About this RNA: Source: RMDB library OK2TST, as collected in RNAgym. The record gives the reactivity of an RNA of 177 nucleotides to DMS. For DMS the reverse transcriptase was MarathonRT. Reactivities are given for positions 27 through 126. The RNA was probed in 150 mM KOAc, 10 mM MgCl2 and 150 mM bicine (pH 8.5) at 24 C.

RNA sequence: GGGAACGACUCGAGUAGAGUCGAAAAACUCGCCAGCGCAUUGCACGGCUGCGUGCAACCAACACGGCGACCGAAGUGCAGGCCGUGGGGGCCGAACUUGCUGUCGCCAAUGCGCAGCUUGCGCUUAGCGCUGGAUUUUAUUCGUAAAAUCCAGCGCAAAAGAAACAACAACAACAAC
Reactivity to DMS in 0.01 (KOAc 150mM, MgCl2 10mM, bicine 150mM(pH8.5), 24C), signal-to-noise 1, nucleotides 027 to 126: a130c020u000c040g000c090c040a050g030c000g000c010a280u010u000g030c140a100c160g010g000c030u000g000c010g010u030g000c190a080a110c280c200a070a110c170a110c190g020g000c010g010a050c000c010g000a020a020g030u000g020c110a300g000g010c000c000g000u000g030g020g060g040g000c030c020g010a130a060c030u000u000g000c020u000g010u000c010g020c020c010a060a030u020g020c000g020c000a020g000c030u000u000g080c070g010c020u020u010a130